[RMDB]
RNA sequence: GGGAACGACUCGAGUAGAGUCGAAAAUUAAAGCACGCGAAGCACGCGAAGCACAUGAAGCACAUGAUGCACUACAAGCAGUACAAGCACGGCAAGCAGUAGAAGCAGUACAAGCAGCCGAAAAAAACCCACUAUUCUAGUUCGCUAGAAUAGUGGGAAAAGAAACAACAACAACAAC
Reactivity to DMS in 0.01 (KOAc 150mM, MgCl2 10mM, bicine 150mM(pH8.5), 24C), signal-to-noise 2, nucleotides 027 to 126: u010u010a060a100a070g020c040a080c050g010c050g000a130a110g000c110a110c070g020c110g000a020a070g020c010a050c140a040u000g000a100a090g020c060a070c080a030u020g000a040u000g000c000a110c050u000a060c150a060a140g000c010a030g010u000a020c120a070a080g010c040a090c090g000g000c030a020a070g020c070a030g010u000a030g000a060a060g050c070a030g020u000a000c050a040a090g000c040a130g000c020c000g010a010a000a080a060a070a050a110
Reactivity to 2A3 in 0.01 (KOAc 150mM, MgCl2 10mM, bicine 150mM(pH8.5), 24C), signal-to-noise 2, nucleotides 027 to 126: u060u040a080a030a050g060c030a030c040g020c000g050a040a030g130c050a010c080g050c010g060a050a010g000c020a010c020a070u050g070a070a000g100c060a030c010a090u040g020a080u040g080c030a000c040u130a030c030a110a000g000c020a020g010u050a050c020a110a060g050c010a030c050g060g000c020a040a000g000c030a020g000u090a010g010a080a000g030c070a000g020u030a030c020a010a040g020c010a010g030c040c020g120a120a010a020a000a010a000a010